The record gives the reactivity of an RNA of 207 nucleotides to 2A3 and DMS. The data come from the RNA Mapping Database (RMDB), library M2RFPK. As a SHAPE reagent, 2A3 marks flexible, mostly unpaired nucleotides at the ribose 2'-OH. The reactions ran in a buffer of 150 mM KOAc, 10 mM MgCl2 and 150 mM bicine (pH 8.5), at 24 C. Reactivities are given for positions 27 through 156. For 2A3 the reverse transcriptase was SuperScript II with manganese.
RNA sequence: GGGAACGACUCGAGUAGAGUCGAAAAAGGGCAGGGUGAAAUUCCCGAUCGGCGGUAAAGUCCGCGAGCCGAACGAAAAAGGUUUGGCAGGAACCGGUGAGAUUCCGGUACCGACAGUUUAGUCUGGAUGACCACUUCAGCUUCGGCUGAAGUGGAACAAAUGAUGUGUGUUCGCACACAUCAUUUGAAAAGAAACAACAACAACAAC
Reactivity to 2A3 in 0.01 (KOAc 150mM, MgCl2 10mM, bicine 150mM(pH8.5), 24C), signal-to-noise 2, nucleotides 027 to 156: a000g080g030g000c070a050g040g010g000u020g010a010a020a050u030u030c020c010c000g010a060u030c010g010g010c010g000g000u010a010a000a010g000u000c000c020g000c010g010a010g000c000c000g010a030a000c010g100a100a050a090a040a000g080g000u000u010u000g000g010c010a010g040g000a010a000c000c000g000g010u010g000a010g000a000u000u000c010c000g000g000u000a000c000c010g000a000c000a000g000u020u080u110a040g000u020c030u040g020g120a110u120g100a050c000c000a000c000u000u000c000a000g000c010u040u150c230g120g000c000u000g000a000a000g000u000g000g000a000a000
Reactivity to DMS in 0.01 (KOAc 150mM, MgCl2 10mM, bicine 150mM(pH8.5), 24C), signal-to-noise 3, nucleotides 027 to 156: a150g000g020g030c080a050g000g010g010u000g010a060a130a290u000u000c010c010c000g020a150u000c010g030g010c020g000g000u010a130a180a080g010u000c010c000g000c000g020a300g000c010c000g020a000a100c010g000a050a140a110a200a170g040g010u000u000u000g000g010c000a090g000g000a030a020c000c000g000g020u000g000a280g000a300u000u000c010c010g000g000u000a000c000c000g000a070c090a080g000u010u000u000a110g010u000c040u000g020g010a190u000g000a240c010c000a010c010u000u000c000a030g010c010u000u000c300g070g020c000u010g010a010a020g020u000g000g000a010a060